Source: RMDB library M2PK90, as collected in RNAgym. Chemical mapping of a 177-nucleotide RNA with 2A3 and DMS. Reactivities are given for positions 27 through 126. The RNA was probed in 150 mM KOAc, 10 mM MgCl2 and 150 mM bicine (pH 8.5) at 24 C.
RNA sequence: GGGAACGACUCGAGUAGAGUCGAAAACAUAUGACGGAGAGUGGAACACUCAGCGGAAACGCAUCCAAUGUCUGAAGUCUUUUAUGGGUAUAACAGUCAGUUGACCCAGAUCCCAACAGACAAUAAACCGUGAAGAUAGGUUCGCCUAUCUUCACGGAAAAGAAACAACAACAACAAC
Reactivity to 2A3 in 0.01 (KOAc 150mM, MgCl2 10mM, bicine 150mM(pH8.5), 24C), signal-to-noise 2, nucleotides 027 to 126: c010a030u160a060u190g060a050c050g060g010a000g000a000g070u050g050g210a200a000c030a000c030u010c000a010g020c020g020g010a020a030a020c010g000c000a020u060c000c020a060a090u050g010u020c000u030g060a110a010g010u000c000u000u050u010u040a050u010g000g080g010u060a140u060a300a000c020a010g300u300c030a020g010u120u020g030a010c000c000c000a020g020a030u000c000c000c010a000a030c020a010g040a010c000a030a040u160a100a060a050
Reactivity to DMS in 0.01 (KOAc 150mM, MgCl2 10mM, bicine 150mM(pH8.5), 24C), signal-to-noise 2, nucleotides 027 to 126: c080a080u060a050u010g010a070c090g020g010a090g000a020g030u000g010g030a080a160c110a080c040u020c040a190g010c020g000g000a090a060a170c010g000c050a300u010c060c010a150a090u000g000u010c010u000g000a210a130g000u000c020u010u000u000u000a120u000g000g000g010u000a050u000a010a000c050a170g010u010c260a120g000u000u000g010a000c000c000c000a030g000a090u010c000c000c000a060a180c100a040g000a000c020a080a120u000a030a040a110